[RMDB]
RNA sequence: GGGAACGACUCGAGUAGAGUCGAAAAGCUAACGGCAGUUGCGCCAUGAAAAUGGCAAGACGGGUCGGGGCUGGCAUAGAAAGGCCGGUAGGCAGUGCAGCGGAAGGUAAGAAAACCGCCAAGCGAACUAAUCGCCGGUAUUCGUACCGGCGAUUAGAAAAGAAACAACAACAACAAC
Reactivity to DMS in 0.01 (KOAc 150mM, MgCl2 10mM, bicine 150mM(pH8.5), 24C), signal-to-noise 2, nucleotides 027 to 126: g000c020u040a030a180c010g030g040c000a170g000u000u000g000c300g000c000c010a020u000g020a080a010a100a020u000g000g030c010a070a290g000a010c040g000g000g010u000c000g000g040g020g040c000u030g010g000c010a120u000a050g000a100a090a130g010g010c020c030g040g000u020a030g000g000c000a030g040u060g000c100a200g030c030g000g000a090a040g000g010u040a080a080g020a090a040a090a080c000c000g000c000c050a060a110g000c090g000a040a180
Reactivity to 2A3 in 0.01 (KOAc 150mM, MgCl2 10mM, bicine 150mM(pH8.5), 24C), signal-to-noise 1, nucleotides 027 to 126: g050c090u110a240a050c040g030g000c030a060g000u070u060g000c000g000c030c000a000u060g040a010a020a020a000u030g000g000c000a010a040g040a000c000g000g000g130u020c000g000g040g130g000c080u060g030g000c000a050u150a100g160a110a090a050g090g000c000c000g000g020u050a060g080g000c030a040g000u050g030c020a000g030c000g000g060a190a030g230g040u100a000a050g050a090a110a010a000c000c030g030c000c030a160a000g050c040g010a000a010

Chemical mapping of a 177-nucleotide RNA with DMS and 2A3. The RNA was probed in 150 mM KOAc, 10 mM MgCl2 and 150 mM bicine (pH 8.5) at 24 C. Reactivities are given for positions 27 through 126.